Source information:
The record gives the reactivity of an RNA of 177 nucleotides to 2A3 and DMS. Reactivities are rounded to 0.1 and cut off at 0 and 3. The RNA was probed in 150 mM KOAc, 10 mM MgCl2 and 150 mM bicine (pH 8.5) at 24 C. For DMS, 3,247 sequencing reads were counted. For 2A3, 4,641 sequencing reads were counted.
RNA sequence: GGGAACGACUCGAGUAGAGUCGAAAAUAAGCACAGCAAUCUCCAAGUUACCGUGACGGGGAAGUGGUUCGUUCAUAGUUUCCGGAGUGUGACUGACAUCAACCUCCUCCUUCGUCCACAUGUGUGGCGUUGGUCAUGAUUUCGAUCAUGACCAACGAAAAGAAACAACAACAACAAC
Reactivity to 2A3 in 0.01 (KOAc 150mM, MgCl2 10mM, bicine 150mM(pH8.5), 24C), signal-to-noise 6, nucleotides 027 to 126: u130a040a000g040c020a000c010a020g060c050a040a140u030c030u010c060c030a100a050g060u090u070a110c070c100g040u080g040a010c010g010g000g010g010a030a040g010u030g050g030u030u030c070g020u030u070c040a080u100a210g020u030u010u000c030c050g200g100a130g030u290g000u020g020a020c020u030g020a010c030a060u080c060a010a060c010c000u040c000c020u010c010c000u110u300c020g030u040c050c000a010c020a030u180g120u040g020u020g080g040
Reactivity to DMS in 0.01 (KOAc 150mM, MgCl2 10mM, bicine 150mM(pH8.5), 24C), signal-to-noise 2, nucleotides 027 to 126: u010a140a060g030c040a000c030a060g000c060a070a060u020c060u000c010c030a110a080g060u080u030a090c130c070g000u000g040a030c100g000g000g000g000a040a040g000u000g000g000u000u020c200g030u030u000c040a050u010a040g000u000u000u040c000c050g000g010a090g000u010g030u000g000a050c010u000g010a080c160a030u000c030a040a030c030c010u000c020c010u000c010c000u000u020c000g020u030c010c060a060c060a140u040g020u040g050u010g000g010